[RMDB]
Chemical mapping of a 177-nucleotide RNA with DMS and 2A3. High DMS reactivity at an A or C suggests that its Watson-Crick edge is free. For 2A3, 2,485 sequencing reads were counted. Reactivities are given for positions 27 through 126.

RNA sequence: GGGAACGACUCGAGUAGAGUCGAAAAACAACAGCUUCGCCAAGCAGGAGAAGUUCCGUAGUUGGCAGGCUGCUGCACUGGCGCGCGCGUCGAACGCCAAGCAGCACCCGAUCUUCCGCGUCGAUGCCAUGCCAAGGGAUUUCGAUCCCUUGGCAUGAAAAGAAACAACAACAACAAC
Reactivity to DMS in 0.01 (KOAc 150mM, MgCl2 10mM, bicine 150mM(pH8.5), 24C), signal-to-noise 3, nucleotides 027 to 126: a100c100a100a110c150a040g010c010u000u010c240g010c000c010a030a030g030c070a300g000g000a040g000a120a150g000u020u000c010c030g000u000a100g010u000u000g000g030c010a010g000g020c030u000g010c010u000g020c010a030c180u000g000g010c000g020c090g010c060g000c060g020u010c040g000a030a080c010g020c010c030a040a080g010c020a040g000c110a120c040c000c010g010a090u010c210u000u000c070c090g010c170g000u010c010g020a030u000g000c010
Reactivity to 2A3 in 0.01 (KOAc 150mM, MgCl2 10mM, bicine 150mM(pH8.5), 24C), signal-to-noise 2, nucleotides 027 to 126: a000c040a010a020c030a020g050c010u050u140c170g000c030c000a040a020g100c090a080g010g050a070g050a300a180g200u300u020c020c010g050u070a080g300u040u000g000g020c000a000g010g010c010u030g010c000u010g000c000a070c270u040g010g000c020g000c010g000c000g000c000g080u070c020g010a070a020c020g000c000c000a010a030g020c000a000g000c000a030c010c030c020g060a080u030c080u160u050c090c090g110c050g050u030c010g000a020u020g010c020